[RMDB]
RNA sequence: GGGAACGACUCGAGUAGAGUCGAAAAGAUAUGGAAGCAUCGAUCUGUGAAAUUCAACAGCUCGGAAACGAGACAUGAAUAUGUAGCAGGGAGCUUCCUAAGUCAAAGGGAUACUUCGGUAUCCCAACGGCAAAAAAAAGUUCGCUUUUUUUUGCCGAAAAGAAACAACAACAACAAC
Reactivity to DMS in 0.01 (KOAc 150mM, MgCl2 10mM, bicine 150mM(pH8.5), 24C), signal-to-noise 1, nucleotides 027 to 126: g000a080u010a300u040g000g000a000a000g000c010a220u020c110g010a020u000c000u000g000u000g030a130a030a010u000u000c000a010a100c180a140g000c010u020c000g000g000a050a100a210c030g000a000g020a040c060a180u000g010a000a010u000a020u030g000u000a130g000c040a010g000g020g000a010g000c010u000u010c000c000u000a030a050g010u000c020a020a130a290g000g010g000a000u000a000c000u000u010c250g030g000u000a000u000c030c000c000a020a010
Reactivity to 2A3 in 0.01 (KOAc 150mM, MgCl2 10mM, bicine 150mM(pH8.5), 24C), signal-to-noise 1, nucleotides 027 to 126: g000a020u070a060u150g010g010a000a040g000c020a080u300c020g090a050u000c020u020g000u030g080a090a060a060u020u030c020a040a090c030a170g050c000u020c000g000g000a050a090a070c000g000a000g040a040c050a110u110g000a020a020u080a030u160g010u040a010g000c000a000g000g000g020a000g000c010u020u000c000c000u000a120a030g000u060c040a050a110a160g030g000g020a020u000a010c010u080u180c300g090g000u010a000u010c000c000c000a010a000

Description
Structure probing data (DMS and 2A3) for a 177-nucleotide construct. It was measured as part of the RMDB library TTRDEL.